An RNA of 177 nucleotides, treated with 2A3 and DMS and read out base by base. The reactions ran in a buffer of 150 mM KOAc, 10 mM MgCl2 and 150 mM bicine (pH 8.5), at 24 C.
RNA sequence: GGGAACGACUCGAGUAGAGUCGAAAAGCAGCUCGGGAAUUGAUACCGCAUGGUGGCUGGCGAGUUCAGGAAGCAGGUGCAUGGCUUAUUCCUUCACCUGAUGCACAACAUCGAUCACCGAGCCAUCGUGAUCUAACGCGUUCGCGCGUUAGAUCACAAAAGAAACAACAACAACAAC
Reactivity to 2A3 in 0.01 (KOAc 150mM, MgCl2 10mM, bicine 150mM(pH8.5), 24C), signal-to-noise 1, nucleotides 027 to 126: g070c070a000g000c000u000c000g030g000g030a130a160u030u030g000a040u020a040c050c010g000c080a030u140g020g070u020g000g030c070u040g010g060c060g110a050g050u090u070c030a010g000g120a160a080g060c050a010g000g040u040g070c120a040u050g000g000c020u120u090a060u220u060c010c000u000u040c000a000c000c000u000g040a040u050g040c050a040c000a030a140c010a070u000c000g000a000u010c020a030c050c010g020a000g000c000c010a140u130c030
Reactivity to DMS in 0.01 (KOAc 150mM, MgCl2 10mM, bicine 150mM(pH8.5), 24C), signal-to-noise 1, nucleotides 027 to 126: g000c070a120g010c000u000c010g000g000g000a150a070u010u010g010a100u000a110c010c030g010c050a060u000g020g000u000g000g000c020u000g000g000c070g000a030g020u020u000c180a070g000g020a080a030g010c020a000g000g020u000g000c260a060u010g000g000c300u000u020a110u000u000c010c010u000u000c020a040c000c000u000g020a030u000g000c060a100c160a020a060c090a050u000c000g010a040u000c070a170c000c010g010a040g000c020c110a060u030c080